This 207-nucleotide RNA was probed chemically with 2A3 and DMS. 2A3 adducts were read by reverse transcription with SuperScript II with manganese.
RNA sequence: GGGAACGACUCGAGUAGAGUCGAAAACACGUGAGGGAUAUUGGGUUCAACCUGGCAAGAUCGACCCUAAAGUCAACGCAGCCAUGCUUAUGUCUGCUCGUGCCCAUGGCAUCAUGACCACUGGCUUCAUCAAGAGAUCAACUUUAGUCCAGGCCGCUGCAACCUAAAUAUUCGUAUUUAGGUUGCAAAAAGAAACAACAACAACAAC
Reactivity to 2A3 in 0.01 (KOAc 150mM, MgCl2 10mM, bicine 150mM(pH8.5), 24C), signal-to-noise 8, nucleotides 027 to 156: c050a010c050g070u080g030a100g010g060g010a030u060a070u150u110g040g010g020u090u080c050a070a070c020c010u000g000g020c020a050a040g010a090u060c030g020a070c000c000c000u090a110a100a010g030u040c030a030a040c080g010c040a010g010c030c010a030u090g030c080u280u250a030u070g030u000c010u020g020c020u040c060g060u080g030c010c010c010a040u060g010g000c000a040u060c040a060u200g080a140c030c020a040c090u030g010g010c010u090u060c050a130u040c030a100a010g010a010g010a090u060c020a020a110c030u100u130u130a030g020u050c020c010a020g020g030c020c050g020c060
Reactivity to DMS in 0.01 (KOAc 150mM, MgCl2 10mM, bicine 150mM(pH8.5), 24C), signal-to-noise 4, nucleotides 027 to 156: c050a080c060g010u000g010a090g000g020g020a100u000a070u000u010g010g030g030u000u000c060a050a070c010c010u000g030g060c070a090a120g020a060u000c030g000a050c010c020c020u010a050a040a070g010u000c030a040a130c050g020c060a120g030c030c000a040u000g020c210u010u000a050u010g030u000c040u000g000c020u000c040g020u000g000c020c040c060a170u000g010g020c010a080u000c050a060u000g000a060c020c020a070c040u000g020g010c020u000u000c050a080u000c060a070a120g000a160g020a070u000c020a050a060c040u000u000u000a100g020u000c010c010a060g030g020c030c040g020c090